[RMDB]
RNA sequence: GGGAACGACUCGAGUAGAGUCGAAAAGGCUGAGGGAUUCCUGCUCAGUAACAAGGACACUCCAGCAGAGUAGUUGCCAUUUUUGAAAGUAAUCUUCAUUCUGAUCUACACUAGUAUUAACAUGUCAGUUAUUGGCGAUGUUCGCAUCGCCAAUAACAAAAGAAACAACAACAACAAC
Reactivity to 2A3 in 0.01 (KOAc 150mM, MgCl2 10mM, bicine 150mM(pH8.5), 24C), signal-to-noise 1, nucleotides 027 to 126: g100g020c000u010g000a040g140g020g020a210u160u160c000c000u010g040c000u020c010a060g010u050a100a080c040a050a050g080g040a010c000a010c050u000c000c040a020g000c030a000g040a000g050u050a050g020u000u020g000c020c000a050u060u140u080u110u070g160a150a050a010g040u060a020a080u000c020u050u040c070a080u140u000c020u030g020a060u000c020u110a020c010a010c080u060a000g060u080a100u120u040a100a030c040a050u170g100u120c030a030
Reactivity to DMS in 0.01 (KOAc 150mM, MgCl2 10mM, bicine 150mM(pH8.5), 24C), signal-to-noise 2, nucleotides 027 to 126: g010g010c020u000g020a020g000g010g010a270u020u000c070c040u010g000c020u010c010a070g010u000a120a090c170a080a150g000g000a170c180a050c040u000c040c060a050g060c130a150g000a050g010u000a010g000u000u000g000c010c020a160u000u000u000u000u000g000a050a070a060g030u010a080a040u000c050u000u010c050a040u000u000c100u010g010a030u000c060u000a070c100a030c070u010a020g010u000a030u010u000a040a130c060a080u020g000u000c110a100